[RMDB]
RNA sequence: GGGAACGACUCGAGUAGAGUCGAAAAUCUUUCAGCAUUGUUCUGUAAUUCUCAUUGCAGAGAUCUUUCAUCUCUCUAACUGUAUUUCUAGGUAUUUUAUUCUUUCUGUGACUUUUGUGAAUGGGAUUGCAUUCUUUAUUAGGCUCCCAGCUUGAAAGGUACGACCUAAUUUCGAUUAGGUCGUACCAAAAGAAACAACAACAACAAC
Reactivity to 2A3 in 0.01 (KOAc 150mM, MgCl2 10mM, bicine 150mM(pH8.5), 24C), signal-to-noise 1, nucleotides 027 to 156: u060c030u060u180u180c020a070g090c000a090u190u210g060u120u070c010u000g040u040a020a150u160u000c070u040c160a060u040u090g040c120a060g000a010g100a030u030c090u040u300u140c080a100u060c020u020c010u000c060u020a010a150c010u050g040u120a100u010u140u050c030u050a000g050g020u070a170u010u130u000u080a170u180u060c000u070u080u010c050u050g050u010g150a130c030u050u180u110u120g050u010g160a130a030u030g050g020g070a020u000u030g000c000a020u070u020c010u070u240u000a220u110u050a060g020g050c010u010c000c000c000a000g000c020u060u030g060a060a060a010

This 207-nucleotide RNA was probed chemically with 2A3. The data come from the RNA Mapping Database (RMDB), library OK3TST. Reactivities are given for positions 27 through 156. The reactions ran in a buffer of 150 mM KOAc, 10 mM MgCl2 and 150 mM bicine (pH 8.5), at 24 C.